RNA sequence: GGGAACGACUCGAGUAGAGUCGAAAAAUCUGCAUGGGUGGACAUAGUCUCUGAACACUAGUGGGUUUGAAAAACAGAGUCUCUCACCUACAGCAUUGUUAGUCUGCAACCAACUACUAGUGAUUUGUAAUGUAUGGACCUUCGGGUCCAUACAUUAAAAAGAAACAACAACAACAAC
Reactivity to DMS in 0.01 (KOAc 150mM, MgCl2 10mM, bicine 150mM(pH8.5), 24C), signal-to-noise 1, nucleotides 027 to 126: a060u000c020u000g020c030a300u010g010g020g000u010g000g000a100c230a110u010a010g000u010c030u020c030u000g010a050a120c060a010c010u000a050g010u010g000g010g010u010u000u010g000a080a020a150a100a080c020a020g010a040g000u000c010u000c120u000c010a020c000c000u010a030c100a080g020c090a050u030u000g000u000u000a110g000u000c080u000g000c040a030a110c040c050a050a080c000u000a020c010u000a030g000u000g010a280u000u000u020g020
This 177-nucleotide RNA was probed chemically with DMS. The reactions ran in a buffer of 150 mM KOAc, 10 mM MgCl2 and 150 mM bicine (pH 8.5), at 24 C. The DMS profile rests on 1,155 reads. For DMS the reverse transcriptase was MarathonRT. Source: RMDB library OK2TRN, as collected in RNAgym.